Chemical mapping of a 177-nucleotide RNA with 2A3 and DMS. For DMS the reverse transcriptase was MarathonRT. The reactions ran in a buffer of 150 mM KOAc, 10 mM MgCl2 and 150 mM bicine (pH 8.5), at 24 C.
[RMDB]
RNA sequence: GGGAACGACUCGAGUAGAGUCGAAAAGAAGGUACCAACAAAGACUGAGGAUCGGUGAGCCUCAGUCGAACUCACCGUAAACAAAAGCUCAACGAGGAGCAAACUCGAACAAAGGUACCGAAAGAAAGGGAUACAGAUUCUUCGGAAUCUGUAUCCCAAAAGAAACAACAACAACAAC
Reactivity to 2A3 in 0.01 (KOAc 150mM, MgCl2 10mM, bicine 150mM(pH8.5), 24C), signal-to-noise 1, nucleotides 027 to 126: g170a090a080g020g000u020a010c000c010a000a050c040a040a090a000g040a030c050u000g010a000g030g000a050u120c050g180g000u080g000a060g000c030c030u010c000a000g010u000c000g000a000a000c000u020c000a080c000c040g010u060a130a000a000c030a080a120a050a000g010c030u010c030a020a020c140g170a040g210g000a000g000c000a000a000a050c050u030c030g150a040a080c060a070a090a010g000g000u010a000c000c000g000a000a010a000g200a000a020a000
Reactivity to DMS in 0.01 (KOAc 150mM, MgCl2 10mM, bicine 150mM(pH8.5), 24C), signal-to-noise 1, nucleotides 027 to 126: g020a270a050g020g020u000a000c000c000a030a100c220a130a070a120g000a090c020u000g030a070g000g000a250u040c060g000g030u010g030a060g020c010c000u000c000a050g030u000c000g010a060a110c020u000c010a090c070c120g020u010a000a030a090c100a120a150a090a210g000c060u020c130a030a110c120g000a190g090g000a120g020c150a060a020a030c070u000c000g000a120a180c100a020a010a050g000g000u000a000c040c000g000a040a220a000g000a000a190a020
2A3 adducts were read by reverse transcription with SuperScript II with manganese.